Structure probing data (2A3) for a 207-nucleotide construct. Values cover nucleotides 27 to 156. The reactions ran in a buffer of 150 mM KOAc, 10 mM MgCl2 and 150 mM bicine (pH 8.5), at 24 C. 2A3 adducts were read by reverse transcription with SuperScript II with manganese.

RNA sequence: GGGAACGACUCGAGUAGAGUCGAAAAGUAACGCGGGCUUGUGAUCCGAGUGGAGACAACAAGAUGUUGGAACUAUGGGCCGAUCUCAUUAGGCCGGGUUCGGGUUGGCUAUUCACUGGCCUGCCCAUUCCAAGUCGGGAGUUGAGGGUUCGGGCUCGACGCGACUAUAGUUCGCUAUAGUCGCGUCAAAAGAAACAACAACAACAAC
Reactivity to 2A3 in 0.01 (KOAc 150mM, MgCl2 10mM, bicine 150mM(pH8.5), 24C), signal-to-noise 1, nucleotides 027 to 156: g090u050a060a050c010g030c010g070g020g020c040u020u050g040u100g130a050u000c040c040g030a050g000u080g020g030a020g000a000c040a100a000c010a120a030g060a120u110g050u070u060g010g050a080a030c010u040a300u160g000g020g030c000c020g000a020u010c060u000c050a070u080u270a100g000g000c000c060g000g000g030u060u040c020g020g000g040u050u020g000g000c010u020a020u090u150c040a050c100u000g000g000c020c000u010g020c000c000c000a000u050u000c000c000a020a020g060u020c010g000g060g050a090g000u050u050g020a060g100g000g010u130u220c090g000g040g010c000u030c060